[RMDB]
An RNA of 177 nucleotides, treated with 2A3 and DMS and read out base by base.
The DMS profile rests on 1,396 reads.
For DMS the reverse transcriptase was MarathonRT.
The reactions ran in a buffer of 150 mM KOAc, 10 mM MgCl2 and 150 mM bicine (pH 8.5), at 24 C.
The 2A3 profile rests on 1,785 reads.
RNA sequence: GGGAACGACUCGAGUAGAGUCGAAAAGCACUGGCGUUCGCGCCAGUGCAAAGAACGCGACGGCGACCGAAAUAAAACGGUGAAGAACGCGACAAGCCGUAAAAACGUCGAACUUCGGUUCGACGAAGUUAAAGUGUCUCUUCGGAGACACUUUAACAAAAGAAACAACAACAACAAC
Reactivity to 2A3 in 0.01 (KOAc 150mM, MgCl2 10mM, bicine 150mM(pH8.5), 24C), signal-to-noise 1, nucleotides 027 to 126: g000c000a000c000u010g010g030c020g080u070u090c210g030c020g050c110c000a000g020u000g030c020a000a030a000g000a060a030c020g000c010g160a030c030g020g000c030g020a000c020c000g090a020a180a040u280a030a130a010a000c020g000g000u050g000a040a090g050a170a050c020g020c000g050a020c050a120a000g020c000c010g030u040a010a110a000a000a000c000g010u000c000g000a000a000c000u010u080c190g050g000u000u020c000g010a000c000g010a030a010
Reactivity to DMS in 0.01 (KOAc 150mM, MgCl2 10mM, bicine 150mM(pH8.5), 24C), signal-to-noise 2, nucleotides 027 to 126: g020c000a000c040u000g000g040c000g010u000u010c200g020c000g000c000c020a010g010u000g050c000a000a020a080g010a080a120c010g010c020g010a060c030g000g000c060g000a050c000c000g000a100a090a110u010a070a040a150a090c010g020g020u000g020a180a090g000a070a070c040g000c010g010a030c140a060a090g000c000c010g030u000a090a050a080a050a150c010g030u000c000g020a000a000c000u000u000c160g020g010u000u000c000g000a000c010g000a010a030